The record gives the reactivity of an RNA of 207 nucleotides to 2A3. For 2A3, 810 sequencing reads were counted.

[RMDB]
RNA sequence: GGGAACGACUCGAGUAGAGUCGAAAAGAAGAUUCACUCUCUAUAGACUCAUGAGGUAGAGUCUCAGUUGUGCUACCUCAAUCACAAUAUUAGAGUUAGGCGAAACUCUAAUUAAGAACAGAAUCGCCUCUGUUCUAGAGAGUGAAUCUGGAGAGUCCUCAUAGUCACGGUUCGCCGUGACUAUGAGAAAAGAAACAACAACAACAAC
Reactivity to 2A3 in 0.01 (KOAc 150mM, MgCl2 10mM, bicine 150mM(pH8.5), 24C), signal-to-noise 1, nucleotides 027 to 156: g050a030a010g000a000u000u000c000a010c020u000c000u000c000u000a040u050a190g040a060c040u060c110a090u080g000a010g000g000u000a020g000a060g070u050c040u010c090a060g020u080u080g040u080g040c020u000a010c000c020u000c000a010a080u080c060a030c050a140a120u080a050u140u040a020g000a000g000u030u070a100g110g000c080g090a070a060a050c020u020c020u020a010a010u120u080a080a030g000a000a000c020a030g000a030a120u180c110g120c020c060u000c000u000g000u010u000c000u000a000g000a000g000a000g010u000g000a000a000u000c000u000g000g030a060g000a000g050u030c010
Source: RMDB library OK3TST, as collected in RNAgym. For 2A3 the reverse transcriptase was SuperScript II with manganese. The RNA was probed in 150 mM KOAc, 10 mM MgCl2 and 150 mM bicine (pH 8.5) at 24 C.